[RMDB]
RNA sequence: GGGAACGACUCGAGUAGAGUCGAAAACAAGAGGCUACACACUGCAUCGAUAAGGCAUCUGUAAAAUCGGACAAAUACCAAGGAGCUUUGCGUUUGAUGUCGUUUCAAGCCACCGAACAAGCGACCUGAUCUCGAUAAGCCAGAUUCUUCUCUGAGAAGUUUGUGUGUUAUUCGUAACACACAAACUAAAAGAAACAACAACAACAAC
Reactivity to DMS in 0.01 (KOAc 150mM, MgCl2 10mM, bicine 150mM(pH8.5), 24C), signal-to-noise 1, nucleotides 027 to 156: c050a120a140g000a110g000g010c040u000a090c030a040c060a090c060u020g030c010a060u000c010g020a040u010a070a190g020g060c010a050u040c000u010g020u020a050a130a110a130u020c120g010g010a070c060a030a060a110u020a040c080c000a110a210g000g030a240g000c030u010u000u000g020c090g010u000u000u010g030a190u000g000u000c000g030u000u020u010c050a040a170g000c000c050a080c000c030g000a130a080c110a090a070g020c030g010a020c010c020u000g000a050u010c040u050c040g000a100u000a060a130g040c030c010a110g010a120u000u010c060u010u000c020u000c050u000g000a130g010a120
Reactivity to 2A3 in 0.01 (KOAc 150mM, MgCl2 10mM, bicine 150mM(pH8.5), 24C), signal-to-noise 4, nucleotides 027 to 156: c050a040a040g050a020g130g000c040u100a010c060a010c000a010c110u080g010c030a050u080c070g070a060u050a110a050g040g000c010a040u020c050u020g060u090a060a050a040a080u090c030g010g000a020c050a090a100a000u180a120c020c090a100a050g070g020a020g000c000u070u040u110g030c080g080u010u040u090g070a060u050g040u090c050g030u010u100u100c050a070a020g000c000c020a050c020c040g020a020a020c040a130a010g050c020g040a070c000c000u060g030a090u030c040u020c060g050a070u020a090a010g020c020c020a000g000a010u080u000c010u030u010c030u040c040u050g090a050g020a120
Chemical mapping of a 207-nucleotide RNA with DMS and 2A3. The DMS profile rests on 2,221 reads. Reactivities are rounded to 0.1 and cut off at 0 and 3. For 2A3, 1,986 sequencing reads were counted. For DMS the reverse transcriptase was MarathonRT.